[RMDB]
RNA sequence: GGGAACGACUCGAGUAGAGUCGAAAAGCGCAAAUCCACAAACGCCAACGAUGAGCGUUUCGCUGUAGCCGCUUAAGGCAACAGCCGGGGCCGCCUGAGCCCUGUUACCAAAGACGGCUGGCGGGGCUAAUUACUUAUUGCUUCGGCAAUAAGUAAAACACGGCAUAAUAUUCGUAUUAUGCCGUGUAAAAGAAACAACAACAACAAC
Reactivity to 2A3 in 0.01 (KOAc 150mM, MgCl2 10mM, bicine 150mM(pH8.5), 24C), signal-to-noise 3, nucleotides 027 to 156: g040c040g010c030a050a070a030u070c060c020a090c060a050a070a010c060g020c010c030a070a070c100g200a200u110g030a050g020c020g020u020u120u110c030g000c010u020g000u060a060g000c000c010g080c170u230u230a120a160g000g000c000a030a020c000a030g020c000c030g020g000g000g000c010c060g010c000c010u050g040a010g000c010c000c030u010g030u060u090a060c000c020a020a100a000g070a030c020g000g020c020u000g030g010c000g020g010g010g000c010u060a060a110u130u020a010c000u000u000a000u000u000g000c010u010u060c240g040g000c010a000a000u000a000a000g000u000a000a000a000
Reactivity to DMS in 0.01 (KOAc 150mM, MgCl2 10mM, bicine 150mM(pH8.5), 24C), signal-to-noise 1, nucleotides 027 to 156: g030c040g040c040a080a070a100u000c020c040a070c050a060a200a050c030g010c020c020a110a200c130g000a170u020g020a220g010c010g000u000u000u000c000g070c030u020g060u000a060g010c020c000g000c240u000u000a050a200g000g040c010a070a020c070a040g040c000c040g030g030g010g030c000c010g020c070c080u000g020a020g000c020c020c020u000g000u040u000a080c050c050a040a140a110g020a130c210g070g020c080u000g000g000c000g040g000g040g020c000u000a090a200u000u000a000c000u000u020a010u000u000g020c020u010u030c300g060g000c000a010a010u000a000a000g000u010a020a000a120